Background:
This 177-nucleotide RNA was probed chemically with 2A3. The 2A3 profile rests on 378 reads. For 2A3 the reverse transcriptase was SuperScript II with manganese. Reactivities are given for positions 27 through 126.

RNA sequence: GGGAACGACUCGAGUAGAGUCGAAAAGUGGUUUUCCCGCUAGACCUCUUCUCACCAUACCCUUUCGCAUGUCGUACCUUCUGUAUGGACGGCGUCCGUGUUUGUGUGGGUAGAGCGGGUGUGGAAGGACGGUCCUGUGGUUCGCCACAGGACCGUCAAAAGAAACAACAACAACAAC
Reactivity to 2A3 in 0.01 (KOAc 150mM, MgCl2 10mM, bicine 150mM(pH8.5), 24C), signal-to-noise 1, nucleotides 027 to 126: g120u100g110g000u000u000u000u000c000c000c000g000c000u010a080g100a080c000c000u020c060u090u000c020u000c000a020c000c000a030u050a050c050c000c000u120u170u000c000g000c000a020u190g010u020c000g000u050a230c040c040u190u040c300u300g070u070a070u100g050g000a000c010g000g000c000g000u010c020c000g050u040g090u100u120u020g300u100g000u020g000g040g110u010a000g010a010g000c010g050g190g000u080g000u010g090g000a020a050g200